An RNA of 207 nucleotides, treated with DMS and 2A3 and read out base by base.
RNA sequence: GGGAACGACUCGAGUAGAGUCGAAAAUACGCGUUCGCGCGUAACGUUUCCUAAGUCGACUUUGAUCGCUGGGAGGCCGAUAAGAAUUUCGGAAACGAAAUUCUUUUGACGGCUUAACAGCGGGAGUCGAUAUGGAUGUAAGAUGGUUCGCCAUCAAUAACCCAAAAUGUUUCGACAUUUUGGGUUAAAAAGAAACAACAACAACAAC
Reactivity to DMS in 0.01 (KOAc 150mM, MgCl2 10mM, bicine 150mM(pH8.5), 24C), signal-to-noise 3, nucleotides 027 to 156: u000a000c000g040c000g030u000u010c300g000c030g030c000g030u000a010a040c090g020u000u000u000c000c000u000a110a240g020u010c010g000a010c000u000u010u010g010a130u010c020g010c010u000g030g000g010a120g010g020c000c000g010a170u000a030a010g000a020a020u000u000u000c010g020g010a160a130a300c010g010a020a010a010u000u000c000u010u000u000u010g020a220c120g020g000c000u010u010a160a180c010a010g040c000g000g000g010a010g000u000c000g000a020u010a130u010g010g010a120u000g000u000a070a140g000a030u010g010g020u000u000c230g000c030c010a020u000c010a050a260
Reactivity to 2A3 in 0.01 (KOAc 150mM, MgCl2 10mM, bicine 150mM(pH8.5), 24C), signal-to-noise 3, nucleotides 027 to 156: u080a010c010g010c000g030u050u070c240g000c000g000c000g080u020a070a010c040g040u000u140u050c010c000u040a140a030g020u000c000g010a010c020u090u080u130g180a250u200c020g000c000u010g000g000g030a040g010g040c000c000g010a010u010a080a000g000a000a000u030u010u010c020g010g030a110a020a030c000g010a000a010a000u010u000c000u020u010u000u020g120a050c000g010g000c000u010u000a010a010c000a010g010c000g000g000g000a010g000u000c010g000a000u000a050u070g040g000a030u080g090u240a080a110g110a020u110g020g040u070u150c240g060c140c000a000u110c000a010a020